RNA sequence: GGGAACGACUCGAGUAGAGUCGAAAAGCAACGGGGCGCUGCGGCUUCCCGAGCUGGAUUUGGCCGCGGGCAUGGACAGCGCCCGGGAGUGGCUCCGUGACAGGAUAUUUCAGCGCUUCUCGGACAGGCUGACCUCAUUGUUCGCAAUGAGGUCAGCAAAAGAAACAACAACAACAAC
Reactivity to 2A3 in 0.01 (KOAc 150mM, MgCl2 10mM, bicine 150mM(pH8.5), 24C), signal-to-noise 2, nucleotides 027 to 126: g030c000a020a000c000g010g000g000g020c000g000c020u000g040c020g160g050c000u020u000c000c000c020g020a020g000c020u070g300g000a300u290u110u300g050g000c030c050g260c000g050g020g000c020a080u050g040g060a000c000a000g010c000g000c000c000c010g010g000g030a100g030u030g050g000c040u000c010c000g000u010g030a050c060a210g080g040a060u080a080u070u190u120c040a010g000c010g000c010u010u000c050u020c000g000g000a020c000a040g000

The record gives the reactivity of an RNA of 177 nucleotides to 2A3. 2A3 adducts were read by reverse transcription with SuperScript II with manganese. Values are in units of 0.01, from 0 to 300, in steps of 10.